RNA sequence: GGGAACGACUCGAGUAGAGUCGAAAAGAUAUGGAGAUACCGACGCGGUCUACCCACCCACCUAUUCUAAGUUCGGAAACGAACUUAGAAUAGGUGGAGGACCGAACUACGUCGUAUCUCCUAAGUCCGUAUAAACACCGUUCGCGGUGUUUAUACGAAAAGAAACAACAACAACAAC
Reactivity to 2A3 in 0.01 (KOAc 150mM, MgCl2 10mM, bicine 150mM(pH8.5), 24C), signal-to-noise 1, nucleotides 027 to 126: g140a100u300a240u300g010g000a010g000a020u050a040c180c210g020a030c020g030c000g060g000u000c020u090a280c030c070c020a020c030c020c010a000c000c000u010a000u050u030c000u000a000a000g010u010u000c030g060g020a130a020a100c040g000a030a030c000u000u000a000g000a000a000u000a000g000g000u010g010g000a000g000g000a000c000c000g000a000a010c130u180a070c060g000u020c010g000u020a000u050c000u070c000c000u000a000a050g020u050c090
Reactivity to DMS in 0.01 (KOAc 150mM, MgCl2 10mM, bicine 150mM(pH8.5), 24C), signal-to-noise 2, nucleotides 027 to 126: g000a150u030a240u010g010g010a000g050a020u000a010c120c050g010a010c010g020c000g000g000u010c010u000a090c030c000c070a300c090c000c000a000c010c000u000a000u000u010c000u000a010a010g000u000u000c000g030g000a140a090a190c010g040a030a000c000u010u000a000g000a000a000u000a000g030g030u000g010g000a020g010g000a030c020c000g000a050a060c160u030a300c030g000u000c000g020u010a050u000c000u000c000c000u000a010a080g000u000c130